[RMDB]
RNA sequence: GGGAACGACUCGAGUAGAGUCGAAAAUCGUCUUGAACUGAUGGUGGAAGAGGUGGCGCGUAACGCGUCCGUGGUGGCACAGAGUACGGCAGACGCGAAGAAAUCAGCCGGCGAUGCCAGUGCAUCAUGAUAGUGUUCCUUUCGAGGAACACUAUCAAAAAGAAACAACAACAACAAC
Reactivity to 2A3 in 0.01 (KOAc 150mM, MgCl2 10mM, bicine 150mM(pH8.5), 24C), signal-to-noise 3, nucleotides 027 to 126: u040c020g040u000c030u030u130g060a090a060c050u060g010a010u070g040g040u020g030g040a090a040g030a050g080g000u070g040g000c020g010c010g060u110a220a010c100g020c020g010u030c000c000g010u060g020g040u020g020g020c000a010c010a070g110a020g050u100a040c020g010g010c030a000g030a070c030g030c030g080a070a060g070a020a110a010u080c030a000g020c030c000g040g000c020g020a020u110g030c020c030a070g060u080g050c020a070u040c010a040
Reactivity to DMS in 0.01 (KOAc 150mM, MgCl2 10mM, bicine 150mM(pH8.5), 24C), signal-to-noise 5, nucleotides 027 to 126: u010c070g010u010c030u010u000g020a090a110c090u020g000a060u000g010g010u000g010g010a090a090g010a100g010g030u010g020g000c010g020c040g020u000a070a120c090g000c010g010u000c010c070g020u000g000g010u000g000g020c040a060c110a110g010a110g020u000a070c040g010g000c040a070g010a070c060g010c080g010a090a090g000a050a080a080u000c060a090g010c030c030g020g020c050g000a130u000g010c030c050a060g010u000g030c040a040u000c090a100

Conditions: 150 mM KOAc, 10 mM MgCl2 and 150 mM bicine (pH 8.5), 24 C. The record gives the reactivity of an RNA of 177 nucleotides to 2A3 and DMS. DMS (dimethyl sulfate) methylates the pairing face of unpaired adenines and cytosines. The DMS profile rests on 5,358 reads. It was measured as part of the RMDB library OK2TST. The 2A3 profile rests on 3,258 reads.